RNA sequence: GGGAACGACUCGAGUAGAGUCGAAAAGAUAUGGACUUCCUACCUCCUUGUCCAGCAAGGGAGCCACUAUCGGAAACGAUAGAAUGGCAUCGAUCUUGCUGGACAAGGAGGUAGGAGUCCUAAGUCAGUUUGUUAAUUGGUUCGCCAAUUAACAAACAAAAGAAACAACAACAACAAC
Reactivity to DMS in 0.01 (KOAc 150mM, MgCl2 10mM, bicine 150mM(pH8.5), 24C), signal-to-noise 2, nucleotides 027 to 126: g000a060u010a300u000g030g000a010c000u000u010c000c000u000a010c000c000u010c000c000u000u000g010u000c010c000a010g020c020a010a010g000g020g000a030g000c000c000a080c010u000a000u000c000g020g010a180a180a210c010g010a020u000a000g000a070a120u010g010g010c000a250u000c240g030a060u020c000u010u010g000c000u000g000g010a000c000a000a010g030g000a000g000g010u000a000g000g000a010g010u000c000c000u000a000a060g010u010c060a150

Record summary
Chemical mapping of a 177-nucleotide RNA with DMS. For DMS the reverse transcriptase was MarathonRT. For DMS, 3,265 sequencing reads were counted. Values cover nucleotides 27 to 126. The RNA was probed in 150 mM KOAc, 10 mM MgCl2 and 150 mM bicine (pH 8.5) at 24 C.